RNA sequence: GGGAACGACUCGAGUAGAGUCGAAAAACGUAGUGAUACGUCACUACGAUGCCUACUGAGCUGAUAACAGUUGAUGUAUUUAGCACUGGCUCAGUUCAGCAGGAACAGCACCGGUACGCCGGUGCAAGGAUACUUUAGGGUUCGCCCUAAAGUAUCCAAAAGAAACAACAACAACAAC
Reactivity to 2A3 in 0.01 (KOAc 150mM, MgCl2 10mM, bicine 150mM(pH8.5), 24C), signal-to-noise 9, nucleotides 027 to 126: a000c000g000u000a000g000u000g010a010u030a070c290g060u010c010a000c000u000a000c010g030a050u130g060c000c000u010a010c000u010g000a000g010c010u000g020a030u050a300a110c010a020g030u170u060g100a150u100g100u280a270u160u230u200a060g020c020a000c010u010g000g000c010u010c000a000g000u000u000c000a000g000c000a010g010g040a050a070c050a050g000c000a000c000c010g000g010u090a060c260g040c030c000g000g000u000g000c000a000a000
Reactivity to DMS in 0.01 (KOAc 150mM, MgCl2 10mM, bicine 150mM(pH8.5), 24C), signal-to-noise 4, nucleotides 027 to 126: a110c010g000u000a000g010u000g000a030u000a070c180g040u000c000a000c000u000a010c000g000a070u010g010c010c010u000a060c000u000g000a010g020c010u000g000a020u010a140a150c020a000g010u020u020g030a070u020g000u020a110u030u010u020a140g020c080a030c010u000g000g020c170u000c000a010g000u000u000c010a000g000c040a040g000g000a080a090c150a110g000c010a000c000c000g010g000u010a140c230g010c010c000g000g010u000g000c000a020a030